[RMDB]
RNA sequence: GGGAACGACUCGAGUAGAGUCGAAAAAAGUGCCUAACCGAGAUCGUAGAGUGUGUCUCGUUGGAGUCAAUUUCCAACAGAAUUUCUCCUCAUGUGUUAUAUCUGAGAGCAGCGUAAUAGCACCCAAAACCCGGUAGCGAUUCGUCGCUACCGGGUUAAAAGAAACAACAACAACAAC
Reactivity to 2A3 in 0.01 (KOAc 150mM, MgCl2 10mM, bicine 150mM(pH8.5), 24C), signal-to-noise 1, nucleotides 027 to 126: a020a010g250u280g000c050c000u040a000a070c000c000g000a000g000a090u040c000g070u170a000g000a070g110u150g000u000g100u020c000u050c040g000u060u120g000g000a030g000u200c090a000a180u000u180u030c040c000a000a000c000a000g040a080a110u060u020u000c000u000c000c000u020c000a000u060g070u000g070u130u000a110u060a100u090c000u020g000a000g000a020g240c000a000g000c000g000u020a060a000u070a100g080c030a090c000c000c000a000a000